[RMDB]
This 177-nucleotide RNA was probed chemically with DMS and 2A3. For 2A3, 1,468 sequencing reads were counted. 2A3 adducts were read by reverse transcription with SuperScript II with manganese. It was measured as part of the RMDB library OK2TRN.
RNA sequence: GGGAACGACUCGAGUAGAGUCGAAAAGUACGUGAGCCGGGCGAUCGUGCGUUCGUCUUGGGGCCAGCCGAUGCUCAACCCGGAGUCGCGGUUUCUGCGGGAAAUCCCGCAGGAGCUCAUCGACUGGGUACAAUUAACCGUUCGCGGUUAAUUGUACAAAAGAAACAACAACAACAAC
Reactivity to DMS in 0.01 (KOAc 150mM, MgCl2 10mM, bicine 150mM(pH8.5), 24C), signal-to-noise 2, nucleotides 027 to 126: g010u000a040c110g010u000g020a150g020c030c030g010g010g000c040g020a080u000c080g010u000g020c080g020u000u000c070g010u000c060u000u000g010g010g030g020c030c020a070g010c040c040g010a030u000g010c070u010c070a110a110c030c020c030g010g010a040g020u010c140g000c300g020g000u000u000u000c010u010g020c000g030g000g010a200a120a210u010c020c000c000g000c000a000g020g010a000g000c000u000c070a030u010c000g000a030c010u000g010g010
Reactivity to 2A3 in 0.01 (KOAc 150mM, MgCl2 10mM, bicine 150mM(pH8.5), 24C), signal-to-noise 1, nucleotides 027 to 126: g090u070a040c040g050u060g030a030g060c040c020g030g040g020c030g020a050u040c040g110u140g110c070g030u020u080c000g020u000c030u090u200g050g000g100g020c010c010a000g000c000c010g010a040u080g000c010u020c060a060a120c020c030c000g010g080a020g000u040c050g000c020g050g000u000u000u010c010u000g000c010g000g020g050a170a300a240u300c010c000c000g020c000a000g010g010a000g000c030u050c050a060u090c010g000a000c010u010g060g060